Chemical mapping of a 177-nucleotide RNA with DMS and 2A3.
Conditions: 150 mM KOAc, 10 mM MgCl2 and 150 mM bicine (pH 8.5), 24 C.
For 2A3, 1,355 sequencing reads were counted.
For DMS the reverse transcriptase was MarathonRT.
RNA sequence: GGGAACGACUCGAGUAGAGUCGAAAAAAUGCCGGGUCGCUGCCACCCAGCACUCGUUGCAGGGCAGGCAGCAGCAGCGCGGUAGCAGAACCGGCCGGGACGUGCAGCGCACGCAGGAUGGCUAUGCUGGAGUAUUCUGUUUCGACAGAAUACUCCAAAAAGAAACAACAACAACAAC
Reactivity to DMS in 0.01 (KOAc 150mM, MgCl2 10mM, bicine 150mM(pH8.5), 24C), signal-to-noise 2, nucleotides 027 to 126: a060a060u000g000c020c000g010g000g060u000c120g010c000u000g020c010c010a300c000c010c000a030g040c010a010c020u000c250g000u000u010g010c000a050g000g010g010c050a140g010g010c000a020g000c010a020g010c110a110g010c010g010c010g020g000u010a040g020c010a020g000a080a140c010c000g000g000c010c020g000g020g030a120c020g040u000g020c020a170g010c150g000c020a000c000g020c040a140g010g020a070u010g010g020c010u000a090u000g020c080
Reactivity to 2A3 in 0.01 (KOAc 150mM, MgCl2 10mM, bicine 150mM(pH8.5), 24C), signal-to-noise 1, nucleotides 027 to 126: a020a040u070g000c040c010g030g100g010u050c030g000c000u000g000c000c000a000c000c000c000a020g000c000a010c010u230c090g200u240u030g000c000a040g020g000g000c080a150g060g000c010a000g030c010a000g000c020a020g010c050g000c020g060g000u060a040g000c030a010g000a040a040c020c000g020g040c030c000g300g060g040a120c020g050u020g040c030a110g250c080g070c080a000c000g000c010a010g070g000a060u040g010g000c000u070a000u070g030c010